[RMDB]
RNA sequence: GGGAACGACUCGAGUAGAGUCGAAAAAUUGUGCGGUCUGUGAGAGAGGAGAACCUGUCUGAGAGAGCUUACCGCUUUUCAUAGUGGCUCUCUGAGAGACUCUGAGGCUCCUCUCGUUCCCAACCAAAGUUCUCAUCUAGUUCGCUAGAUGAGAACUAAAAGAAACAACAACAACAAC
Reactivity to 2A3 in 0.01 (KOAc 150mM, MgCl2 10mM, bicine 150mM(pH8.5), 24C), signal-to-noise 2, nucleotides 027 to 126: a000u160u120g040u030g020c070g030g040u030c020u070g060u090g040a060g010a010g000a010g130g000a010g000a090a190c000c030u050g060u010c000u110g000a010g000a000g000a000g000c030u050u120a070c020c020g070c150u070u100u020u110c130a120u140a110g040u070g040g000c000u000c000u000c000u020g000a040g000a000g000a050c020u020c190u280g070a050g080g010c010u020c000c020u010c010u000c010g010u010u020c000c000c000a010a010c020c010a060a120
Reactivity to DMS in 0.01 (KOAc 150mM, MgCl2 10mM, bicine 150mM(pH8.5), 24C), signal-to-noise 2, nucleotides 027 to 126: a070u000u000g010u000g020c050g020g020u000c110u010g010u000g000a170g000a010g000a040g000g000a020g010a070a070c030c030u000g020u000c000u000g000a010g010a020g000a020g010c060u000u010a070c030c060g010c070u000u010u030u000c190a140u000a070g010u000g010g000c010u000c010u000c000u000g000a090g000a040g000a020c070u010c190u000g010a100g010g020c000u000c000c000u000c020u000c000g010u000u000c000c020c000a160a070c210c140a060a100

An RNA of 177 nucleotides, treated with 2A3 and DMS and read out base by base. The reactions ran in a buffer of 150 mM KOAc, 10 mM MgCl2 and 150 mM bicine (pH 8.5), at 24 C. The data come from the RNA Mapping Database (RMDB), library M2PK90. As a SHAPE reagent, 2A3 marks flexible, mostly unpaired nucleotides at the ribose 2'-OH. In probing experiments dimethyl sulfate is read out at A N1 and C N3, which are open when not base-paired.